The record gives the reactivity of an RNA of 177 nucleotides to 2A3 and DMS.
For 2A3 the reverse transcriptase was SuperScript II with manganese.

[RMDB]
RNA sequence: GGGAACGACUCGAGUAGAGUCGAAAAAAGCAUCCUGAAUGAUCACGGAAUCAGAUAUCUUCCCCAUGUCACUUGAUCGGGAAUGAGGCAUUGUAAACACUUUGACUUUAACCAAGUGAGAUGGUACCUCUAGCUCCACUUUCGAGUGGAGCUAGAGAAAAGAAACAACAACAACAAC
Reactivity to 2A3 in 0.01 (KOAc 150mM, MgCl2 10mM, bicine 150mM(pH8.5), 24C), signal-to-noise 1, nucleotides 027 to 126: a000a000g090c020a050u020c000c040u070g090a120a090u180g020a060u140c070a050c300g120g030a080a040u050c000a040g020a110u060a040u100c050u030u030c000c000c020c030a010u130g050u000c000a020c010u000u040g050a060u120c050g050g040g000a040a080u170g010a030g020g000c040a020u000u000g050u080a120a110a080c080a000c010u050u020u000g060a070c010u010u040u100a060a000c000c000a000a000g040u010g000a030g020a010u040g000g040u080a070c020
Reactivity to DMS in 0.01 (KOAc 150mM, MgCl2 10mM, bicine 150mM(pH8.5), 24C), signal-to-noise 1, nucleotides 027 to 126: a060a040g020c080a070u000c090c030u000g010a170a110u010g000a080u010c050a070c110g000g000a110a050u000c080a020g000a120u010a050u010c050u010u030c020c020c010c020a010u000g000u000c010a000c010u000u000g000a080u030c170g010g000g000a030a090u020g000a010g010g030c020a030u000u040g000u000a080a110a110c260a090c030u000u000u000g010a160c000u000u010u000a080a170c080c020a050a000g010u030g010a020g000a030u000g000g000u030a100c200